[RMDB]
RNA sequence: GGGAACGACUCGAGUAGAGUCGAAAAGCUCGGAGACGAGCAAGGCUGACAAAACUAUGUCCCAACCUCCACGUGGUGUCGGCUGGAUAAUGCUGCAUUAUGUUGCAUUUAUCAACUGGGAACCAAAGAUGCCCAUGAUCUUCGGAUCAUGGGCAUCAAAAGAAACAACAACAACAAC
Reactivity to 2A3 in 0.01 (KOAc 150mM, MgCl2 10mM, bicine 150mM(pH8.5), 24C), signal-to-noise 2, nucleotides 027 to 126: g000c000u000c000g000g070a060g020a020c000g000a000g000c000a000a000g060g000c000u000g000a000c000a000a180a080a020c040u130a090u110g060u010c020c000c000a000a040c010c020u010c000c020a120c050g070u100g030g000u040g040u070c000g000g000c000u040g000g060a000u000a010a000u000g000c020u000g000c010a100u140u000a220u300g010u020u000g010c000a000u040u110u160a090u010c020a010a030c020u030g000g030g000a020a000c000c020a060a040a040

Chemical mapping of a 177-nucleotide RNA with 2A3. The data come from the RNA Mapping Database (RMDB), library OK1LIB. For 2A3 the reverse transcriptase was SuperScript II with manganese. The reactions ran in a buffer of 150 mM KOAc, 10 mM MgCl2 and 150 mM bicine (pH 8.5), at 24 C.